[RMDB]
RNA sequence: GGGAACGACUCGAGUAGAGUCGAAAAAGGAAAAGGAAAAGGGAAUGGACAGCCACAAAGGUGUUACAACUGUGGAAAACCGGGACAUCAAGCAAGGCAAUGUAGACAAGGAAUCAUAUGUCACAACUGUGGAAAGAGAGGACAUAUGCAAAAAGAAGUACCUAUUAGUCUUCGGACUAAUAGGUACAAAAGAAACAACAACAACAAC
Reactivity to DMS in 0.01 (KOAc 150mM, MgCl2 10mM, bicine 150mM(pH8.5), 24C), signal-to-noise 2, nucleotides 027 to 156: a080g060g000a090a050a020a060g010g000a030a080a110a100g000g040g040a110a100u000g000g020a110c110a170g020c010c030a120c070a070a070a150g040g010u010g000u010u020a090c030a060a040c020u000g050u010g040g020a100a080a060a080c110c070g000g010g020a060c030a050u000c070a060a100g000c040a020a030g030g000c060a070a060u020g000u010a090g010a100c080a030a060g050g030a070a030u000c040a040u000a060u000g020u000c000a030c060a080a110c050u000g000u000g010g000a080a100a060g000a090g020a210g020g020a020c010a030u010a020u000g010c080a000a070a040a040a030g000a080a200
Reactivity to 2A3 in 0.01 (KOAc 150mM, MgCl2 10mM, bicine 150mM(pH8.5), 24C), signal-to-noise 7, nucleotides 027 to 156: a010g050g020a030a030a010a010g030g020a050a050a020a010g020g000g020a040a020u050g030g010a030c030a040g030c020c000a030c050a040a090a010g060g000u050g030u070u050a030c030a100a010c090u050g020u080g070g000a030a060a020a050c050c020g020g010g010a000c010a040u060c040a040a010g010c020a000a050g020g000c010a010a020u090g010u070a030g020a050c040a040a010g030g040a040a010u040c000a010u020a010u040g020u010c010a020c020a270a130c090u100g000u080g080g040a060a060a010g050a010g020a050g010g010a000c000a010u040a010u040g050c050a030a040a070a010a020g100a090a010